[RMDB]
RNA sequence: GGGAACGACUCGAGUAGAGUCGAAAAAGGAACUGGGGACCUGCCAUGUACAAUUAGCACAGAAAUGUUUCCAGAAGUGCUGCCAUGGAUAACUGUGUAGUUGAAACCUCACUGAGGCCUCUCAGGCCAUCAUCCAGGUAUUCGUACCUGGAUGAUGAAAAGAAACAACAACAACAAC
Reactivity to 2A3 in 0.01 (KOAc 150mM, MgCl2 10mM, bicine 150mM(pH8.5), 24C), signal-to-noise 9, nucleotides 027 to 126: a010g130g000a060a010c030u040g000g000g010g030a030c000c010u020g020c020c010a040u070g040u090a070c050a090a100u140u080a090g030c010a000c010a010g130a060a150a050u190g070u070u100u030c020c010a030g040a180a020g060u040g040c030u040g030c030c010a020u020g000g010a050u070a170a110c040u030g010u020g040u110a040g020u020u060g060a100a050a030c010c000u030c000a060c060u080g040a030g030g020c010c000u070c010u020c030a020g050g000c010
Reactivity to DMS in 0.01 (KOAc 150mM, MgCl2 10mM, bicine 150mM(pH8.5), 24C), signal-to-noise 9, nucleotides 027 to 126: a070g010g010a090a060c060u000g000g000g010g010a090c030c020u010g000c020c010a020u000g000u020a100c140a080a110u050u040a030g020c010a010c010a060g000a090a120a090u030g010u010u010u000c030c030a070g000a220a130g000u000g000c010u000g000c240c020a030u000g000g000a070u020a050a170c090u000g010u010g020u020a040g000u000u010g010a120a100a100c180c010u010c020a040c060u010g000a050g010g010c040c040u020c030u020c050a040g000g000c090

Chemical mapping of a 177-nucleotide RNA with 2A3 and DMS.
Source: RMDB library OK1LIB, as collected in RNAgym.
The reactions ran in a buffer of 150 mM KOAc, 10 mM MgCl2 and 150 mM bicine (pH 8.5), at 24 C.
The 2A3 profile rests on 27,074 reads.